This 177-nucleotide RNA was probed chemically with DMS and 2A3.

RNA sequence: GGGAACGACUCGAGUAGAGUCGAAAAGGUAUCAAAGCGUUUAUAGCCGUUGUCAGAGCUGCAGAACAUCAGUCAGAAAAAGCAGCGGACCAGGGUUCGUGUGCAGGAUAAGCGGGUGCAAAUCAACUCUAAAGCAUUCGUUCGCGAAUGCUUUAGAAAAAGAAACAACAACAACAAC
Reactivity to DMS in 0.01 (KOAc 150mM, MgCl2 10mM, bicine 150mM(pH8.5), 24C), signal-to-noise 4, nucleotides 027 to 126: g000g040u010a020u020c080a070a080a110g000c050g010u020u020u000a090u030a150g020c080c040g000u010u010g010u000c010a120g010a110g010c010u010g020c020a080g020a080a080c200a070u010c070a080g000u040c090a050g000a060a060a090a110a130g020c000a040g000c020g000g010a040c030c080a060g010g000g020u000u010c050g030u020g030u000g000c040a050g000g000a060u030a030a030g020c040g010g000g010u000g010c050a040a020a070u020c150a040a080c190
Reactivity to 2A3 in 0.01 (KOAc 150mM, MgCl2 10mM, bicine 150mM(pH8.5), 24C), signal-to-noise 3, nucleotides 027 to 126: g040g010u010a030u040c030a110a100a010g030c090g030u080u060u070a200u090a040g000c050c000g050u010u040g030u030c050a020g000a040g070c040u050g000c010a020g020a110a100c050a120u100c020a010g220u050c050a020g140a010a200a020a030a000g010c000a000g000c000g000g010a010c020c020a080g020g020g130u070u080c010g060u070g030u040g070c050a040g020g050a000u010a200a000g060c000g020g020g000u040g000c020a000a050a040u100c030a000a040c050